The record gives the reactivity of an RNA of 177 nucleotides to DMS and 2A3. Values cover nucleotides 27 to 126. For DMS the reverse transcriptase was MarathonRT. The reactions ran in a buffer of 150 mM KOAc, 10 mM MgCl2 and 150 mM bicine (pH 8.5), at 24 C. The DMS profile rests on 34,106 reads.
RNA sequence: GGGAACGACUCGAGUAGAGUCGAAAAAAUAUGCUCGACAGGCUGCCUGUCCGACAGAGCUUUUAGAUCUUCUGAUCUUUCCCUGCAGCAUAUCGCUUAUGCAUCAAGCGAUUGUCGGUUCACACAAGUCGUACAUAAUAUUCGUAUUAUGUACGACAAAAGAAACAACAACAACAAC
Reactivity to DMS in 0.01 (KOAc 150mM, MgCl2 10mM, bicine 150mM(pH8.5), 24C), signal-to-noise 9, nucleotides 027 to 126: a070a070u000a050u010g010c050u000c040g010a120c100a060g000g010c110u000g010c040c110u000g010u010c020c020g020a020c040a060g010a080g010c130u000u000u000u000a010g000a010u000c010u000u010c300u010g010a010u000c000u000u000u000c000c000c000u010g010c080a070g010c020a050u010a030u000c010g010c010u000u000a080u010g020c210a110u000c130a040a010g010c000g000a020u000u000g010u000c030g000g010u010u000c100a090c150a090c230a080a110
Reactivity to 2A3 in 0.01 (KOAc 150mM, MgCl2 10mM, bicine 150mM(pH8.5), 24C), signal-to-noise 7, nucleotides 027 to 126: a000a000u240a050u090g000c020u020c020g050a040c030a030g060g040c050u060g100c030c030u080g090u030c020c000g010a010c010a020g020a000g020c000u010u020u010u010a010g000a010u010c020u280u050c180u300g000a010u000c000u000u000u000c000c000c010u020g020c030a040g000c010a020u020a010u150c000g000c020u040u040a080u220g130c060a100u160c090a030a000g000c000g010a020u000u020g020u020c030g020g050u110u140c120a100c000a010c020a140a070